Chemical mapping of a 207-nucleotide RNA with 2A3. The reactions ran in a buffer of 150 mM KOAc, 10 mM MgCl2 and 150 mM bicine (pH 8.5), at 24 C. Reactivities are rounded to 0.1 and cut off at 0 and 3.

RNA sequence: GGGAACGACUCGAGUAGAGUCGAAAAUUAUUCAGCCGACCACACCAGCACUAGGGGCUGCAUAGAGAAUAAGCACAGAUCCUGAGAUUCUGAGAGUACAUGUGGAGAGGAAGGAGGAGGGGCUGAGUGUGAGCCACUCUGAGGGGACAUACCACCAGUAUUUAAUCCUCUUCGGAGGAUUAAAUACAAAAGAAACAACAACAACAAC
Reactivity to 2A3 in 0.01 (KOAc 150mM, MgCl2 10mM, bicine 150mM(pH8.5), 24C), signal-to-noise 1, nucleotides 027 to 156: u130u060a060u030u060c020a010g000c000c010g050a040c010c070a040c020a010c070c000a030g060c060a070c130u130a100g000g000g000g110c010u040g030c010a010u100a030g070a010g020a090a090u080a200a010g000c020a030c050a090g030a010u020c010c010u110g000a030g000a150u130u010c010u030g010a010g000a060g090u090a070c010a040u120g010u060g040g020a050g000a010g060g030a050a100g030g000a010g000g040a020g040g080g000g000c030u050g030a030g020u070g000u040g000a050g010c040c010a010c000u070c020u030g000a050g040g030g000g000a010c040a080u120a000c030c040a030c090c060a000